RNA sequence: GGGAACGACUCGAGUAGAGUCGAAAAUGCUCUGCAUGGGCUGUGAUGCAAUCAGGUAUUGCUCCAAGGAGUGCCAGAGGAAGCACUGUCUAAGUGGGCACAGGCACGAGUGCACUGCAAUAAGGUCGAUGAAUUGAUCAUUCGUGAUCAAUUCAUCAAAAGAAACAACAACAACAAC
Reactivity to DMS in 0.01 (KOAc 150mM, MgCl2 10mM, bicine 150mM(pH8.5), 24C), signal-to-noise 7, nucleotides 027 to 126: u000g010c020u000c020u000g020c060a050u010g010g000g020c030u010g000u010g010a090u010g010c030a100a060u000c050a120g010g010u000a050u000u000g000c010u000c020c030a100a120g010g010a100g010u000g010c030c040a120g010a160g010g000a120a130g010c030a020c020u000g000u000c060u010a080a090g020u000g000g010g000c030a040c130a060g010g000c030a050c070g000a130g010u000g000c020a050c040u000g020c050a050a080u020a100a100g000g000u010c140
Reactivity to 2A3 in 0.01 (KOAc 150mM, MgCl2 10mM, bicine 150mM(pH8.5), 24C), signal-to-noise 5, nucleotides 027 to 126: u040g000c000u000c030u080g040c030a060u100g040g020g020c020u010g040u070g050a050u100g020c030a010a060u030c020a060g040g120u130a050u070u110g010c000u000c030c010a060a060g060g020a040g030u040g010c020c010a120g030a050g090g080a070a020g000c010a010c040u030g060u050c040u070a110a070g060u100g040g030g000c030a020c030a060g060g000c020a010c080g030a040g010u030g000c020a020c130u050g010c020a020a090u120a190a040g110g040u100c060
Annotation
This 177-nucleotide RNA was probed chemically with DMS and 2A3. For DMS, 10,855 sequencing reads were counted. The RNA was probed in 150 mM KOAc, 10 mM MgCl2 and 150 mM bicine (pH 8.5) at 24 C.